[RMDB]
RNA sequence: GGGAACGACUCGAGUAGAGUCGAAAAAACCUGAUGACUUUUCUAUUUCACUAAAAUUAGAUGAGGUGCUUGCACUAUUCACUGCACAGAGGCGUAAUCCUCCAAUAUGAAAAUAAAAAAAUAUAUAGACGUUCAUAACAUUCGUGUUAUGAACGUCAAAAGAAACAACAACAACAAC
Reactivity to 2A3 in 0.01 (KOAc 150mM, MgCl2 10mM, bicine 150mM(pH8.5), 24C), signal-to-noise 2, nucleotides 027 to 126: a000a000c090c000u120g040a150u130g070a120c080u070u060u050u000c030u090a080u050u160u060c070a060c050u130a300a130a040a040u120u090a040g040a040u060g010a040g160g000u040g010c070u070u060g030c000a000c020u060a120u100u110c050a060c060u000g000c040a040c020a170g040a010g080g000c020g090u050a040a070u060c000c000u000c000c000a000a080u060a010u300g000a000a050a000a030u240a070a120a000a000a000a010a000u180a000u040a060u070a110